RNA sequence: GGGAACGACUCGAGUAGAGUCGAAAAUUACGCCGCGGACAACACGCGGCUCGUGGUGCGCACCACUGCAAAGUGUGACGUGCUGCAGGCCACUGGCCACUACAUUCUGGCCAACUGCCCAGUGGGGCUCUGAGACAUACUUCGGUAUGUCUCAGAGAAAAGAAACAACAACAACAAC
Reactivity to DMS in 0.01 (KOAc 150mM, MgCl2 10mM, bicine 150mM(pH8.5), 24C), signal-to-noise 6, nucleotides 027 to 126: u010u010a100c200g010c000c000g020c000g010g000a160c260a100a130c160a120c030g020c010g010g020c000u000c040g030u000g010g020u000g010c010g010c160a090c120c060a010c010u010g020c250a080a150a040g000u000g000u000g020a170c060g020u000g000c000u010g010c000a110g010g000c010c030a050c040u000g000g000c000c000a020c120u000a120c190a150u010u010c120u000g010g010c010c000a080a140c150u010g010c010c010c000a130g020u010g000g010g010g020